[RMDB]
Background:
Structure probing data (2A3 and DMS) for a 170-nucleotide construct. It was measured as part of the RMDB library 15KLIB. For 2A3, 32,121 sequencing reads were counted. Values cover nucleotides 27 to 129. As a SHAPE reagent, 2A3 marks flexible, mostly unpaired nucleotides at the ribose 2'-OH. DMS adducts were read by reverse transcription with MarathonRT.

RNA sequence: GGGAACGACUCGAGUAGAGUCGAAAAAGCGGGCCUCCCGAUCCGAGGGGCCCGGUGGCCUGAUCUGGAGGGCACUCCGGGCCGUAAGGAAGAAAAGCACCCAGAGGGAGGAAGCCACACAGGGGUUAGAGCAUUCAGUUCGCUGAAUGCAAAAGAAACAACAACAACAAC
Reactivity to 2A3 in 0.01 (KOAc 150mM, MgCl2 10mM, bicine 150mM(pH8.5), 24C), signal-to-noise 9, nucleotides 027 to 129: a000g070c070g010g020g040c000c000u020c010c010c000g010a030u000c010c010g010a040g100g090g000g000c000c000c000g000g000u000g000g010c000c000u070g030a160u110c060u160g180g070a080g070g020g000c070a220c090u000c000c000g000g010g010c000c010g040u000a000a010g010g020a000a030g050a010a050a000a010g030c020a070c000c010c010a020g030a080g040g010g000a000g000g000a000a010g040c010c010a100c000a030c040a080g060g020g010g000u070u120a080g030a010
Reactivity to DMS in 0.01 (KOAc 150mM, MgCl2 10mM, bicine 150mM(pH8.5), 24C), signal-to-noise 9, nucleotides 027 to 129: a080g030c060g010g000g000c040c040u010c000c000c020g000a160u030c010c020g020a300g000g000g000g000c000c040c000g020g040u020g000g000c030c010u020g010a180u050c190u010g020g010a270g010g010g000c030a080c000u020c010c030g000g000g040c000c030g000u020a040a190g020g000a020a090g030a070a060a060a100g000c050a090c040c010c010a110g000a210g030g010g000a020g000g000a030a020g040c000c040a090c090a100c110a090g020g000g020g000u030u020a110g020a130